[RMDB]
RNA sequence: GGGAACGACUCGAGUAGAGUCGAAAAUGCUGGCCGGGACGGCGCUGGCGCUCACGCCGGUGGCGGCGCUGAUGUUCCGGUUCAACAAUCCCGACGCGCUGCUGGUGCUGCUGCUGACGCUCGGCGCGUACGGGAUGCUCCGCGCGCAGGAGGGCGCAGUGUAAUUGGCAUUCGUGCCAAUUACACUAAAAGAAACAACAACAACAAC
Reactivity to 2A3 in 0.01 (KOAc 150mM, MgCl2 10mM, bicine 150mM(pH8.5), 24C), signal-to-noise 2, nucleotides 027 to 156: u100g010c030u030g020g000c000c000g000g000g010a000c010g020g040c020g010c000u030g050g050c010g000c020u070c020a210c140g240c220c140g090g010u010g020g080c000g000g000c000g000c000u010g060a210u130g000u020u000c000c010g030g000u020u070c000a010a000c000a010a070u010c000c000c000g000a000c000g000c000g000c000u000g010c110u130g110g000u130g020c060u090g000c060u070g030c020u070g070a040c030g050c030u030c030g010g000c010g010c000g020u040a180c000g000g010g000a000u030g000c010u040c030c030g040c000g000c020g000c120a070g010g140a090g090g120g000c020g010c020
Source: RMDB library OK3TST, as collected in RNAgym.
An RNA of 207 nucleotides, treated with 2A3 and read out base by base.
For 2A3 the reverse transcriptase was SuperScript II with manganese.
The reactions ran in a buffer of 150 mM KOAc, 10 mM MgCl2 and 150 mM bicine (pH 8.5), at 24 C.
Values cover nucleotides 27 to 156.